[RMDB]
RNA sequence: GGGAACGACUCGAGUAGAGUCGAAAAUGUGUGUUUUGGAUAUUUAGUUAAACAAAUGUGCAAAUAUUUUAACCAAAGGAGCAUAUUCAUUUGUGUUUUAUUUUCUUAAUGGUUUUCGUUAUGAAUGAAUCAGAGUACACUUCGGUGUACUCUGAUUAAAAGAAACAACAACAACAAC
Reactivity to DMS in 0.01 (KOAc 150mM, MgCl2 10mM, bicine 150mM(pH8.5), 24C), signal-to-noise 1, nucleotides 027 to 126: u010g030u010g030u010g020u010u000u010u000g000g010a160u000a040u000u000u000a090g000u010u010a080a110a180c070a050a080a040u020g010u000g020c040a020a040a020u010a030u000u000u010u010a040a080c060c030a050a050a070g000g000a090g000c050a030u000a030u000u010c090a080u000u000u000g000u010g000u010u000u000u010a080u000u020u020u000c020u000u020a060a120u000g000g010u010u010u000u010c030g000u000u000a070u000g010a070a000u000g000

Background: The data come from the RNA Mapping Database (RMDB), library OK2TST. This 177-nucleotide RNA was probed chemically with DMS. Reactivities are given for positions 27 through 126. For DMS the reverse transcriptase was MarathonRT.